The data come from the RNA Mapping Database (RMDB), library VIROID. The record gives the reactivity of an RNA of 177 nucleotides to 2A3 and DMS. 2A3 is a SHAPE reagent: it acylates the 2'-hydroxyl of flexible nucleotides of all four kinds. DMS (dimethyl sulfate) methylates the pairing face of unpaired adenines and cytosines. Conditions: 150 mM KOAc, 10 mM MgCl2 and 150 mM bicine (pH 8.5), 24 C.

[RMDB]
RNA sequence: GGGAACGACUCGAGUAGAGUCGAAAACUAGCUGCGUUUCAACUUGCGUGGGUUGGGGCGGCUUAGCGGAUUAAGGCGUUGUUCCACCCUAGUGGUACUUACCCCACGCAAAGCCUGCGUGCAGGUGCAAUAUUAUUCUGUUCGCAGAAUAAUAUUGAAAAGAAACAACAACAACAAC
Reactivity to 2A3 in 0.01 (KOAc 150mM, MgCl2 10mM, bicine 150mM(pH8.5), 24C), signal-to-noise 7, nucleotides 027 to 126: c020u030a030g150c090u140g060c080g070u020u060u100c050a070a070c040u020u020g000c000g000u010g000g000g020u030u060g040g000g010g020c060g040g010c040u040u090a020g000c090g080g050a100u140u190a130a090g090g020c110g110u110u130g050u200u060c010c000a030c020c010c010u020a050g010u030g190g010u040a150c000u010u040a030c010c000c000c000a000c000g000c000a010a020a000g020c000c010u030g010c040g150u100g010c010a010g030g020u040g020
Reactivity to DMS in 0.01 (KOAc 150mM, MgCl2 10mM, bicine 150mM(pH8.5), 24C), signal-to-noise 9, nucleotides 027 to 126: c030u000a070g020c070u010g020c080g010u000u000u000c030a090a120c080u000u000g010c010g030u000g000g000g010u000u000g010g010g000g010c010g000g000c030u000u000a020g020c130g010g000a170u010u010a080a090g010g000c050g000u000u000g000u010u000c010c010a070c010c080c050u000a060g010u000g010g020u010a080c060u000u000a070c130c010c020c000a010c000g010c010a010a020a110g010c040c050u000g010c110g010u000g010c020a030g000g000u000g010